[RMDB]
RNA sequence: GGGAACGACUCGAGUAGAGUCGAAAAUACAAUAGCGUAGGGAACCAAGCUAAGAGGUUGGAAGUCCAACGGUAGAGGGCUUCGUUCGCAGCUGCUCUAGAAGAGGUCCCACUCCCUACGCCGCAAAGCCCAUACUAAAGUUCGCUUUAGUAUGGGCAAAAGAAACAACAACAACAAC
Reactivity to DMS in 0.01 (KOAc 150mM, MgCl2 10mM, bicine 150mM(pH8.5), 24C), signal-to-noise 3, nucleotides 027 to 126: u010a070c230a090a120u010a080g000c000g020u010a020g010g010g020a020a090c070c090a160a070g000c020u000a080a180g000a020g010g020u010u010g010g020a040a030g030u000c000c000a070a080c150g010g020u020a050g010a220g030g000g010c000u000u000c010g020u000u010c130g000c270a060g000c020u000g010c030u000c030u000a060g000a100a090g000a090g000g000u000c010c020c040a100c080u000c000c000c000u000a010c020g030c000c140g010c170a060a080a050
Reactivity to 2A3 in 0.01 (KOAc 150mM, MgCl2 10mM, bicine 150mM(pH8.5), 24C), signal-to-noise 1, nucleotides 027 to 126: u260a010c110a080a120u070a170g000c000g000u020a020g000g010g020a010a040c010c010a130a010g050c020u070a090a020g030a050g080g060u080u220g180g020a040a000g000u010c010c010a070a090c120g190g030u220a070g010a110g060g000g000c000u050u000c020g040u030u020c100g040c060a020g000c000u070g020c010u020c010u100a110g080a240a000g010a110g010g000u010c000c000c050a020c010u030c020c000c000u010a000c020g000c010c010g010c030a050a050a020